[RMDB]
RNA sequence: GGGAACGACUCGAGUAGAGUCGAAAACUGCAUGCUUAAUUAUGUUGGCAUACUUACUUUGAUUAUGUUCAUUCCACUUUUCUGUAUGUCCUUGGAACGGUGUAAUUACAGCAAACUUUAACGAAUCCCCACCGGAAAAAUUCGUUUUUCCGGUGGGAAAAGAAACAACAACAACAAC
Reactivity to 2A3 in 0.01 (KOAc 150mM, MgCl2 10mM, bicine 150mM(pH8.5), 24C), signal-to-noise 1, nucleotides 027 to 126: c090u150g090c090a130u040g010c010u080u040a060a010u020u050a040u050g150u140u020g000g000c000a000u000a010c000u210u020a000c020u120u190u200g020a040u130u160a080u150g080u010u080c080a060u120u120c060c020a050c010u230u170u070u020c010u060g030u040a030u030g060u020c030c020u020u140g060g000a070a030c010g050g020u060g000u050a040a040u060u030a050c020a080g000c020a130a000a070c110u090u140u210a120a030c020g000a020a010u090c020